An RNA of 177 nucleotides, treated with 2A3 and read out base by base. 2A3 adducts were read by reverse transcription with SuperScript II with manganese. The RNA was probed in 150 mM KOAc, 10 mM MgCl2 and 150 mM bicine (pH 8.5) at 24 C. For 2A3, 1,093 sequencing reads were counted.
[RMDB]
RNA sequence: GGGAACGACUCGAGUAGAGUCGAAAAAUUGCUACUACAUUCUUGAAAAAGUGAUGUAGAUUUAUAGCCCAUAACUUUUUUGAAUUACAUCGACGAUACGGCGUCGAAAGAAAAAUAAAUAGACCGUGGUGACUGUUAUGUUCGCAUAACAGUCACCAAAAGAAACAACAACAACAAC
Reactivity to 2A3 in 0.01 (KOAc 150mM, MgCl2 10mM, bicine 150mM(pH8.5), 24C), signal-to-noise 2, nucleotides 027 to 126: a000u070u140g040c010u000a000c010u000a000c000a000u000u000c000u020u000g100a000a000a000a000a000g010u010g010a000u000g000u000a000g010a000u020u210u060a230u040a030g010c040c000c000a020u120a070a030c100u110u000u000u000u010u110g080a170a100u280u070a120c060a060u050c000g000a000c000g010a020u000a080c000g020g000c000g020u000c000g040a020a070a010g140a000a060a010a000a000u090a010a040a000u100a070g100a030c010c010g000u070